RNA sequence: GGGAACGACUCGAGUAGAGUCGAAAAGCAACGCAAAGCCGCGGCAAGUGGAGUUAGCGAGAAGAGACUAGGCUUUGGUUUCUUUAAGUGAAGCGGUCACCAAUCAGGUGUGGUAGUUACCGUAAAAAUAACCGCUCUUUGUUCGCAAAGAGCGGAACAUAUACUUAUUCUUCGGAAUAAGUAUAUGAAAAGAAACAACAACAACAAC
Reactivity to 2A3 in 0.01 (KOAc 150mM, MgCl2 10mM, bicine 150mM(pH8.5), 24C), signal-to-noise 9, nucleotides 027 to 156: g010c020a040a040c040g020c110a060a040a020g020c020c020g030c050g060g040c070a100a050g040u070g060g070a100g040u130u130a040g060c050g040a040g030a100a030g040a010g010a020c040u060a060g030g070c000u060u050u060g020g000u000u030u010c000u020u060u060a110a060g030u040g110a080a020g010c010g010g010u030c010a010c020c010a040a070u170c060a070g100g040u080g030u030g130g020u050a060g030u050u070a030c000c010g020u050a030a100a030a010a010u120a060a050c000c000g000c010u000c000u000u000u000g020u030u060c150g000c110a000a000a010g000a000g000c000g000g000a000a000
Reactivity to DMS in 0.01 (KOAc 150mM, MgCl2 10mM, bicine 150mM(pH8.5), 24C), signal-to-noise 5, nucleotides 027 to 156: g030c030a050a060c040g000c010a080a080a120g010c030c010g020c020g010g010c080a060a110g030u000g000g000a130g000u000u000a200g020c020g000a260g010a070a060g010a090g010a060c010u000a080g030g010c100u000u000u000g020g010u000u000u010c010u000u000u000a040a300g010u010g010a110a240g010c010g020g020u000c030a060c020c010a060a110u000c070a090g020g010u000g000u010g030g000u000a060g010u000u000a040c020c010g010u010a010a040a060a070a090u010a110a160c010c000g020c000u000c000u000u000u000g000u000u000c280g020c020a010a010a020g000a040g010c000g020g010a010a030